This 177-nucleotide RNA was probed chemically with DMS and 2A3. Values cover nucleotides 27 to 126. For DMS, 1,205 sequencing reads were counted. DMS adducts were read by reverse transcription with MarathonRT. As a SHAPE reagent, 2A3 marks flexible, mostly unpaired nucleotides at the ribose 2'-OH.
RNA sequence: GGGAACGACUCGAGUAGAGUCGAAAAUCGGUUAUCGCGACACCUUCACUGAAGGGCGCGAUGAAAUGGCGUGGAUCAAACAUAUUUAUCAGGAGUGCGGUGUCGCACAACAGCCUCAUGAGGUGGAAUGCGUAGACCAGUUCGCUGGUCUACGCAUAAAAGAAACAACAACAACAAC
Reactivity to DMS in 0.01 (KOAc 150mM, MgCl2 10mM, bicine 150mM(pH8.5), 24C), signal-to-noise 2, nucleotides 027 to 126: u010c030g030g010u000u000a020u000c040g010c000g000a150c030a090c020c000u000u000c020a150c300u020g010a030a010g000g000g000c030g000c020g010a000u000g000a060a090a010u030g020g000c050g050u010g000g020a110u000c090a110a050a080c200a050u000a120u000u030u000a100u020c080a040g010g020a130g030u010g000c150g000g020u020g020u000c070g050c020a050c080a060a020c100a140g000c000c030u000c090a070u020g020a050g000g020u000g000g000a120
Reactivity to 2A3 in 0.01 (KOAc 150mM, MgCl2 10mM, bicine 150mM(pH8.5), 24C), signal-to-noise 2, nucleotides 027 to 126: u020c000g010g030u120u060a000u070c000g040c000g120a090c110a300c010c020u040u020c130a300c280u170g000a000a030g020g040g030c000g060c010g000a010u000g010a000a000a020u130g030g030c050g040u060g040g000a020u020c060a040a040a040c000a040u210a150u140u200u010a070u110c050a010g050g090a030g030u030g020c070g030g030u160g110u090c000g030c020a010c000a030a010c000a010g040c000c000u050c000a070u190g070a010g010g020u040g020g040a160